Chemical mapping of a 177-nucleotide RNA with DMS and 2A3. It was measured as part of the RMDB library OK1LIB. For 2A3, 1,393 sequencing reads were counted.

[RMDB]
RNA sequence: GGGAACGACUCGAGUAGAGUCGAAAAGCGGAUCGAAAAGCCGGAAAGAUCCGCGAGGUACGCGUUUGUCGAUCGUACCAAGCGGUACGAAAAGUACGAGCAGAUCGAAAACGGCGAAAACGAAAAAGGGAUAUCAAUUGUUCGCAAUUGAUAUCCCAAAAGAAACAACAACAACAAC
Reactivity to DMS in 0.01 (KOAc 150mM, MgCl2 10mM, bicine 150mM(pH8.5), 24C), signal-to-noise 2, nucleotides 027 to 126: g000c020g000g020a030u000c000g010a120a020a130a160g030c060c040g040g010a040a090a300g010a030u010c030c010g000c000g000a050g030g030u000a060c000g010c080g020u070u050u020g050u080c040g000a160u020c050g030u000a060c090c120a060a250g030c080g000g000u030a040c000g020a020a100a080a050g000u040a070c040g050a270g010c030a040g010a070u010c010g000a080a040a080a060c000g000g000c000g000a020a010a050a130c050g000a000a090a020a060a130
Reactivity to 2A3 in 0.01 (KOAc 150mM, MgCl2 10mM, bicine 150mM(pH8.5), 24C), signal-to-noise 2, nucleotides 027 to 126: g000c000g020g050a020u040c040g030a020a020a050a210g070c050c000g000g010a050a080a000g020a000u000c000c000g000c000g000a050g040g000u080a030c010g050c010g050u110u110u090g300u110c060g040a100u040c010g000u020a020c010c000a000a030g210c100g000g000u020a000c000g010a000a300a000a000g000u010a000c000g020a040g000c030a050g000a010u010c000g000a010a050a000a000c010g130g000c030g000a000a000a050a040c110g050a170a010a010a020a010